[RMDB]
RNA sequence: GGGAACGACUCGAGUAGAGUCGAAAAGCGCCCCGGCAUGGAGGCCACUCCGCAGGACAUCGAAACCUGGGCCCGCACGCAGAUGGCGAACUACAAGGUCCCGCGCGACUACCAGUUCGUGGACAGCAGUAAGGUAUCAGUUCGCUGAUACCUUACUAAAAGAAACAACAACAACAAC
Reactivity to DMS in 0.01 (KOAc 150mM, MgCl2 10mM, bicine 150mM(pH8.5), 24C), signal-to-noise 5, nucleotides 027 to 126: g020c140g020c040c010c050c070g000g010c060a070u010g010g010a030g010g020c060c080a080c070u020c050c060g030c070a050g020g000a100c060a100u000c110g000a100a100a070c060c020u010g010g010g020c030c010c040g000c070a060c080g010c070a090g010a110u000g000g020c020g000a050a040c030u000a080c120a090a150g000g000u000c000c010c080g010c120g000c060g000a060c050u000a140c170c070a080g010u000u000c040g010u000g010g000a120c090a080g020c100
Reactivity to 2A3 in 0.01 (KOAc 150mM, MgCl2 10mM, bicine 150mM(pH8.5), 24C), signal-to-noise 3, nucleotides 027 to 126: g070c030g090c010c000c000c000g000g050c050a070u110g040g030a010g000g020c030c000a050c030u080c050c020g020c030a030g040g010a080c000a130u150c100g080a110a050a050c010c000u030g010g050g000c010c020c020g070c000a020c020g010c010a010g040a140u080g060g000c000g020a030a020c010u060a030c080a150a130g060g010u020c000c010c030g100c040g010c050g020a020c000u090a140c020c050a060g010u050u050c010g020u050g050g020a060c030a050g000c010
Conditions: 150 mM KOAc, 10 mM MgCl2 and 150 mM bicine (pH 8.5), 24 C. The record gives the reactivity of an RNA of 177 nucleotides to DMS and 2A3. Reactivities are given for positions 27 through 126. 2A3 adducts were read by reverse transcription with SuperScript II with manganese. For 2A3, 4,696 sequencing reads were counted.